[RMDB]
RNA sequence: GGGAACGACUCGAGUAGAGUCGAAAAGAAUGGGUCCACUAAGUGUCAAUCUCAGCCAAGAUUCUAGAACCAAUUAUUAAAGCAAUGGAUCGUGACCACUUUGGUAGUGAUGCUUCACUUGUUUUCUGCCUCUGCAUCACUUACAGGCACAAUAUCAAUCCUGAUCACGCUUCGGCGUGAUCAGGAUAAAAGAAACAACAACAACAAC
Reactivity to 2A3 in 0.01 (KOAc 150mM, MgCl2 10mM, bicine 150mM(pH8.5), 24C), signal-to-noise 1, nucleotides 027 to 156: g100a090a000u120g030g000g000u020c040c000a030c010u000a120a070g080u040g090u100c040a000a100u100c000u020c050a050g050c040c020a120a060g100a040u090u000c030u020a050g030a090a200c000c080a220a120u110u150a060u000u070a210a080a000g040c070a030a050u170g050g010a040u000c010g040u000g050a040c020c020a020c070u160u200u000g140g000u010a000g000u000g050a000u010g000c020u080u140c090a060c170u300u280g100u150u300u080u100c160u060g000c010c040u050c150u100g060c000a000u000c020a000c000u000u050a000c000a000g000g080c080a000c050a120a000u150a020u120c000a020
Structure probing data (2A3) for a 207-nucleotide construct. 2A3 adducts were read by reverse transcription with SuperScript II with manganese.